[RMDB]
RNA sequence: GGGAACGACUCGAGUAGAGUCGAAAAUAGAAUCUCAGCUUUGGAAAGGACUUUAAUUGACCAUAUUUCCGAUGCCUUAAUGUCCUCCGAAACAUUACUGCCACAAAUGGGCAUUUACCUCCUGUUUGAAUUCUGAUUGCUUAUGAAGGAGAACUCACGUGCAUUAGGAAUUCGUUCCUAAUGCACGAAAAGAAACAACAACAACAAC
Reactivity to 2A3 in 0.01 (KOAc 150mM, MgCl2 10mM, bicine 150mM(pH8.5), 24C), signal-to-noise 4, nucleotides 027 to 156: u130a010g080a070a110u010c020u010c070a040g010c030u050u070u090g040g020a090a070a070g020g010a050c010u090u130u120a100a100u130u150g050a080c050c050a060u020a140u160u100u030c040c040g030a040u050g020c000c020u070u090a050a020u050g010u010c000c010u050c020c040g040a060a070a000c000a010u060u150a070c040u080g060c070c020a060c020a030a080a140u100g020g000g000c010a010u080u070u080a070c010c020u030c010c000u030g040u060u040u040g050a050a040u080u070c050u050g080a180u170u070g040c050u110u090a070u160g070a050a010g030g010a030g020a030a000c020u050c040a030
Reactivity to DMS in 0.01 (KOAc 150mM, MgCl2 10mM, bicine 150mM(pH8.5), 24C), signal-to-noise 3, nucleotides 027 to 156: u010a140g000a090a120u010c060u000c050a070g000c060u000u000u000g020g010a070a100a110g020g010a060c030u010u000u000a070a100u010u000g010a100c040c040a160u000a160u000u000u000c040c050g000a120u010g000c030c030u000u000a060a030u010g010u000c020c010u000c050c040g000a120a080a150c030a060u010u000a080c120u000g010c050c060a130c060a060a050a070u000g000g000g010c090a090u000u000u000a080c040c020u000c020c010u000g020u030u000u000g020a090a120u010u000c060u000g000a130u000u000g000c040u000u000a100u000g010a040a060g000g010a090g010a060a170c020u000c050a270